[RMDB]
RNA sequence: GGGAACGACUCGAGUAGAGUCGAAAAUUGAAUAACUUAGGAAAUGCAUUGACUACUGUACUGAAAGUGAAAAACAGAAUGUUUGUAUGGGUAUUCAAAGUACAGUUUCUACUGAAUGUGUGUCACUUUCACACCGUAGUAAAGUCAAAUAUUCCAAACCGAAAAUGACUUUCGAGUCAUUUUCGGUAAAAGAAACAACAACAACAAC
Reactivity to DMS in 0.01 (KOAc 150mM, MgCl2 10mM, bicine 150mM(pH8.5), 24C), signal-to-noise 1, nucleotides 027 to 156: u000u010g050a130a100u000a060a130c020u000u000a230g040g020a090a070a150u000g020c060a170u000u000g020a090c020u010a110c030u000g040u000a030c020u000g010a040a020a150g010u000g000a090a060a070a150a100c010a080g000a070a110u000g000u000u000u000g060u000a050u000g020g010g040u000a020u000u000c020a090a070a040g040u000a020c010a060g010u000u000u000c040u000a080c030u020g000a230a090u000g000u000g030u000g020u000c070a000c180u000u000u010c030a010c010a050c010c090g010u000a030g020u000a010a100a020g000u000c020a050a050a160u000a090u000u000c000c060a040a300
Reactivity to 2A3 in 0.01 (KOAc 150mM, MgCl2 10mM, bicine 150mM(pH8.5), 24C), signal-to-noise 2, nucleotides 027 to 156: u080u080g050a060a030u150a220a050c120u090u110a070g020g000a040a040a010u100g040c020a030u030u030g030a010c000u010a000c000u040g010u010a020c050u020g050a010a030a090g040u020g030a000a040a030a170a000c020a030g080a080a080u020g030u080u120u030g070u090a070u080g070g010g010u070a070u030u090c090a060a060a080g010u000a010c010a040g000u030u030u060c030u030a010c020u030g150a260a240u030g010u000g030u020g080u070c010a040c110u080u120u070c000a000c000a010c020c060g000u000a000g010u040a060a070a000g000u010c010a020a050a070u130a040u050u000c000c040a050a040